[RMDB]
RNA sequence: GGGAACGACUCGAGUAGAGUCGAAAAUGCUCUUCUAUGUCUUCAUCGUCAUCACAAAUUUCUUCAAACUUAAAUAUCUUAAGGACCUUCAACGGACUUGAUAAUAGAGAUUAACGAACUUUGUGAUUAACCACUUUACAUUCGUGUAAAGUGGUUAAAAAGAAACAACAACAACAAC
Reactivity to DMS in 0.01 (KOAc 150mM, MgCl2 10mM, bicine 150mM(pH8.5), 24C), signal-to-noise 5, nucleotides 027 to 126: u010g000c030u010c010u010u000c020u000a050u010g000u000c020u000u000c030a050u000c070g020u020c070a080u000c020a010c010a010a040a030u010u000u000c000u000u000c210a070a070a110c010u000u000a060a090a180u000a020u000c030u020u050a020a020g000g000a160c020c010u000u000c300a100a120c170g000g010a300c010u000u010g000a000u000a020a020u010a230g000a020g000a070u010u010a070a110c200g000a020a010c090u000u000u000g010u000g000a090u000
Reactivity to 2A3 in 0.01 (KOAc 150mM, MgCl2 10mM, bicine 150mM(pH8.5), 24C), signal-to-noise 9, nucleotides 027 to 126: u120g010c010u010c000u050u030c020u020a050u090g020u000c010u050u020c030a090u100c040g080u030c020a040u000c000a010c020a030a030a020u010u030u000c010u070u070c040a070a100a070c010u020u060a040a090a070u080a070u020c020u090u130a050a070g120g070a300c010c000u130u110c130a060a040c130g010g010a010c000u010u020g010a000u010a080a020u050a050g060a010g010a060u060u070a040a030c060g000a000a000c030u010u010u010g010u010g010a010u000

Description: This 177-nucleotide RNA was probed chemically with DMS and 2A3. DMS adducts were read by reverse transcription with MarathonRT. The reactions ran in a buffer of 150 mM KOAc, 10 mM MgCl2 and 150 mM bicine (pH 8.5), at 24 C.